[RMDB]
RNA sequence: GGGAACGACUCGAGUAGAGUCGAAAAUGAGACAAACACGCUUCACAAUGUGCGGCAAAGAAACAUUGUUUAUGCAAAGGCACUUCGCAAUGUGUGCUCCAACAUUGCUUAUUCAAACACGCUUCACAAAAGAAUCAGUGGUUCGCCACUGAUUCAAGUACCUCACCACGUUCGCGUGGUGAGGUACAAAAGAAACAACAACAACAAC
Reactivity to 2A3 in 0.01 (KOAc 150mM, MgCl2 10mM, bicine 150mM(pH8.5), 24C), signal-to-noise 1, nucleotides 027 to 156: u100g000a000g000a020c040a060a000a000c070a030c100g000c000u050u050c000a080c000a040a000u020g000u000g020c000g000g000c050a170a000a170g040a020a010a000c010a010u000u020g060u110u160u160a050u050g080c040a220a000a000g060g040c020a000c030u100u040c040g000c010a010a010u000g000u010g000u040g040c170u080c120c020a000a000c000a020u000u000g000c010u000u210a220u090u090c050a000a090a090c050a100c060g090c170u200u250c030a060c120a040a070a020a000g000a000a000u000c000a000g000u020g120g040u060u070c140g090c090c000a000c000u000g000a000u000u000c000a000a000
Annotation
Source: RMDB library M2RFPK, as collected in RNAgym. An RNA of 207 nucleotides, treated with 2A3 and read out base by base. 2A3 adducts were read by reverse transcription with SuperScript II with manganese. The RNA was probed in 150 mM KOAc, 10 mM MgCl2 and 150 mM bicine (pH 8.5) at 24 C.